[RMDB]
RNA sequence: GGGAACGACUCGAGUAGAGUCGAAAAGAUAUGGACAUUCUAGGGAGAGUUGUGUCGGAAACGACAUAAACUCGACGAUCUAGAUGUCCUAAGUCAAAACCAUCUAGACGUUCGCGUCUAGAUGGAACUAGUAUGAGAUGUUCGCAUCUCAUACUAGAAAAGAAACAACAACAACAAC
Reactivity to DMS in 0.01 (KOAc 150mM, MgCl2 10mM, bicine 150mM(pH8.5), 24C), signal-to-noise 4, nucleotides 027 to 126: g000a020u000a020u010g000g000a020c010a000u010u010c010u000a010g000g000g010a000g010a030g020u000u000g010u000g000u000c000g020g000a000a000a010c000g020a020c010a010u000a010a010a010c000u000c000g000a090c300g000a010u000c000u000a010g000a020u000g010u000c000c010u000a010a080g010u010c010a120a100a150a240c000c000a000u000c000u000a000g000a010c000g010u000u020c290g020c010g010u000c000u000a010g000a010u000g000g010a020a090
Reactivity to 2A3 in 0.01 (KOAc 150mM, MgCl2 10mM, bicine 150mM(pH8.5), 24C), signal-to-noise 4, nucleotides 027 to 126: g000a000u010a000u050g000g000a000c000a020u300u050c070u010a010g020g010g010a040g010a000g010u010u040g010u000g000u010c000g000g000a020a000a000c000g010a000c000a000u040a020a080a010c010u010c010g030a050c000g010a000u010c000u000a010g000a020u000g000u000c000c000u000a000a000g000u000c000a030a040a000a180c010c000a000u010c000u000a000g000a010c000g050u090u060c300g050c000g150u020c000u000a000g000a000u000g000g000a010a050

About this RNA:
Conditions: 150 mM KOAc, 10 mM MgCl2 and 150 mM bicine (pH 8.5), 24 C. The record gives the reactivity of an RNA of 177 nucleotides to DMS and 2A3. It was measured as part of the RMDB library TTRDES.